[RMDB]
Conditions: 150 mM KOAc, 10 mM MgCl2 and 150 mM bicine (pH 8.5), 24 C. This 177-nucleotide RNA was probed chemically with 2A3 and DMS.
RNA sequence: GGGAACGACUCGAGUAGAGUCGAAAAGGACAUCUAACCUCGGACCAUGAUCUGGUUCAGGGACAGUGCCUGGUGGGUAGUUUAACUGGGGCGGUUGCCUCCCAAAAUGUAACGGAGGCGCCCAAAGAUUCGAUGUUAUAUUCGUAUAACAUCGAAUAAAAGAAACAACAACAACAAC
Reactivity to 2A3 in 0.01 (KOAc 150mM, MgCl2 10mM, bicine 150mM(pH8.5), 24C), signal-to-noise 7, nucleotides 027 to 126: g020g000a050c010a040u050c030u060a060a060c010c010u040c110g000g000a000c000c000a030u190g040a130u090c040u070g010g000u010u000c000a010g020g000g000a010c050a030g020u020g030c010c000u030g010g020u190g030g030g010u090a080g050u060u070u130a100a070c080u090g000g000g030g020c050g030g030u120u250g020c000c000u030c000c000c000a090a170a060a080u300g040u100a080a020c040g010g010a000g010g000c000g020c000c000c010a060a110a010g080
Reactivity to DMS in 0.01 (KOAc 150mM, MgCl2 10mM, bicine 150mM(pH8.5), 24C), signal-to-noise 9, nucleotides 027 to 126: g010g010a100c030a030u010c030u010a140a290c010c000u000c140g010g000a010c010c000a030u030g000a150u030c260u010g000g000u000u000c000a030g000g000g010a100c300a080g010u010g010c020c010u010g010g020u020g000g010g010u010a040g000u010u010u000a060a110c090u010g000g000g010g010c070g000g000u010u030g010c010c000u000c000c000c130a070a070a140a110u040g010u020a120a140c300g000g000a020g010g010c010g000c010c000c040a030a070a070g000
For 2A3 the reverse transcriptase was SuperScript II with manganese.